[RMDB]
RNA sequence: GGGAACGACUCGAGUAGAGUCGAAAAGAUAUGGAUGAAAGACUCGCAGGCUUUCUACGAUCGGAAACGAUCGUGAAAGCCUGAACUACGAGGGGAGUCCUAAGUCAAAGCCGUGUUCGCACGGCAAGAUAUCCAUUGUCUUCGGACAAUGGAUAUCAAAAGAAACAACAACAACAAC
Reactivity to 2A3 in 0.01 (KOAc 150mM, MgCl2 10mM, bicine 150mM(pH8.5), 24C), signal-to-noise 2, nucleotides 027 to 126: g050a050u170a070u290g100g000a020u060g090a100a170a090g130a070c010u000c000g010c010a000g000g010c030u070u020u000c120u300a010c020g010a000u010c000g010g000a070a090a020c020g010a000u010c020g000u010g010a000a010a000g020c020c000u000g020a000a010c010u070a040c030g010a010g020g050g010g010a050g020u000c010c000u030a160a030g080u080c080a100a070a020g020c000c010g000u010g040u020u080c300g000c070a020c010g000g000c000a000a000
Reactivity to DMS in 0.01 (KOAc 150mM, MgCl2 10mM, bicine 150mM(pH8.5), 24C), signal-to-noise 4, nucleotides 027 to 126: g000a100u000a300u010g000g010a050u010g000a140a160a200g010a060c000u000c030g010c010a000g000g000c000u000u000u010c000u010a010c010g000a010u010c010g010g000a080a080a170c010g000a010u000c010g020u000g010a010a000a010g010c000c000u000g010a010a040c140u010a220c030g010a060g010g000g030g010a250g010u000c000c000u000a080a150g010u000c100a090a110a150g000c000c000g030u000g000u000u010c150g040c010a030c000g010g010c000a010a030
The record gives the reactivity of an RNA of 177 nucleotides to 2A3 and DMS. The reactions ran in a buffer of 150 mM KOAc, 10 mM MgCl2 and 150 mM bicine (pH 8.5), at 24 C. 2A3 adducts were read by reverse transcription with SuperScript II with manganese.